[RMDB]
RNA sequence: GGGAACGACUCGAGUAGAGUCGAAAACGAUCAUUGCCUAGCUGGUCGAAAAGAGAUUUAUAGGCUCGCAUAUAGAAGGCUUGAGUUAUGUGUCGUCUAUCUGUUAAAUGAAAGACAUAACCUAUGGUCGUAGACGAAUAUGUUGGCAGAUGCUUGGGUUACCUUUAAAGUUCGCUUUAAAGGUAACAAAAGAAACAACAACAACAAC
Reactivity to DMS in 0.01 (KOAc 150mM, MgCl2 10mM, bicine 150mM(pH8.5), 24C), signal-to-noise 2, nucleotides 027 to 156: c020g000a070u000c030a070u000u000g000c000c010u000a070g030c300u000g000g030u000c030g000a080a100a090a170g020a180g000a120u020u010u010a080u000a040g030g030c000u000c110g000c020a070u000a070u000a040g010a090a050g000g020c010u020u000g020a110g020u000u000a030u010g040u010g020u000c020g000u020c020u000a060u000c050u000g020u010u000a140a050a110u010g000a070a050a070g000a030c000a050u000a030a040c020c050u010a080u010g010g010u000c030g030u000a070g020a080c090g030a100a070u000a110u000g020u000u000g000g000c040a110g010a190u000g020c010u000u000g020g020
Reactivity to 2A3 in 0.01 (KOAc 150mM, MgCl2 10mM, bicine 150mM(pH8.5), 24C), signal-to-noise 6, nucleotides 027 to 156: c010g000a000u020c010a030u010u200g000c000c000u000a010g000c030u020g000g010u020c030g070a070a030a100a020g170a010g030a050u170u300u250a100u100a020g010g010c000u000c010g010c020a010u020a000u000a030g030a030a000g000g000c000u030u040g090a070g060u010u000a010u010g010u010g030u030c010g000u000c010u010a020u000c040u000g040u010u050a050a050a080u240g120a050a010a000g100a010c000a000u010a000a000c000c030u060a110u110g090g000u030c050g100u090a050g020a090c050g030a060a040u160a060u140g030u030u010g030g010c070a040g020a180u120g030c000u030u020g090g000
Source: RMDB library ARCHII, as collected in RNAgym. Structure probing data (DMS and 2A3) for a 207-nucleotide construct. The 2A3 profile rests on 5,007 reads. Reactivities are given for positions 27 through 156. The reactions ran in a buffer of 150 mM KOAc, 10 mM MgCl2 and 150 mM bicine (pH 8.5), at 24 C.